[RMDB]
RNA sequence: GGGAACGACUCGAGUAGAGUCGAAAAGAUAUGGACUCACUCCCCACCUACGCGAAGAACAAGCUCGGAAACGAGCUUGGGAGCGUCAGGAGGUGAGUCCUAAGUCAAAGAGGCGUUCGCGCCUCAACAGUUCUACUACGUUCGCGUAGUAGAACUGAAAAGAAACAACAACAACAAC
Reactivity to DMS in 0.01 (KOAc 150mM, MgCl2 10mM, bicine 150mM(pH8.5), 24C), signal-to-noise 4, nucleotides 027 to 126: g010a060u000a140u010g010g010a010c020u000c000a010c000u010c140c030c010c140a300c130c090u020a020c000g050c020g010a110a170g010a150a110c000a010a000g000c020u000c000g000g000a050a060a140c010g000a000g000c000u000u000g000g000g000a090g040c000g000u010c280a070g000g000a080g020g020u020g000a020g000u000c000c000u000a010a060g020u010c080a090a150a150g000a020g000g000c000g020u010u010c170g020c020g010c000c000u010c010a050a110
Reactivity to 2A3 in 0.01 (KOAc 150mM, MgCl2 10mM, bicine 150mM(pH8.5), 24C), signal-to-noise 3, nucleotides 027 to 126: g060a050u150a090u210g000g000a000c000u010c000a010c070u120c060c020c020c020a110c020c030u070a020c020g060c010g250a300a050g000a060a000c000a020a000g000c000u000c000g000g060a050a070a070c000g020a000g030c000u010u000g000g000g000a010g010c020g040u050c180a030g000g000a030g060g050u020g000a000g020u000c000c000u000a020a020g070u030c040a000a090a170g000a010g020g010c010g050u030u140c270g040c030g020c010c000u000c010a000a000